[RMDB]
RNA sequence: GGGAACGACUCGAGUAGAGUCGAAAAUCAGGGUGGCCAGUGCGGCAACCAGAUCGGUGCCAAGUUUUGGGAGGUCAUCUCCGACGAGCACGGUAUUGACCCCACCGGAACCUACCAUGGAGACUCCGUCUCCUUAUGACUUCGGUCAUAAGGAGACAAAAGAAACAACAACAACAAC
Reactivity to DMS in 0.01 (KOAc 150mM, MgCl2 10mM, bicine 150mM(pH8.5), 24C), signal-to-noise 4, nucleotides 027 to 126: u010c080a100g020g010g010u000g020g020c020c050a130g030u000g020c210g000g000c020a050a040c020c030a100g010a050u000c110g000g010u010g020c020c010a140a140g020u000u000u000u010g010g020g000a020g020g000u000c110a060u010c130u010c000c030g010a110c080g020a140g030c150a080c040g010g000u000a050u000u000g010a070c020c000c020c020a090c020c010g000g000a060a040c070c040u000a060c120c030a090u000g000g000a130g000a100c050u000c060c130
Reactivity to 2A3 in 0.01 (KOAc 150mM, MgCl2 10mM, bicine 150mM(pH8.5), 24C), signal-to-noise 2, nucleotides 027 to 126: u090c020a030g040g040g050u040g030g020c050c020a070g070u030g130c060g020g010c030a040a110c020c000a040g050a230u130c080g040g000u030g020c030c030a060a060g020u050u050u070u120g040g020g000a050g000g030u100c030a050u030c090u030c040c000g050a080c020g050a030g090c150a010c040g000g020u020a070u010u040g050a060c000c000c030c000a060c030c010g020g010a010a040c010c010u040a040c020c040a030u080g030g020a040g030a080c030u040c110c030
The data come from the RNA Mapping Database (RMDB), library OK2TST.
The record gives the reactivity of an RNA of 177 nucleotides to DMS and 2A3.
The reactions ran in a buffer of 150 mM KOAc, 10 mM MgCl2 and 150 mM bicine (pH 8.5), at 24 C.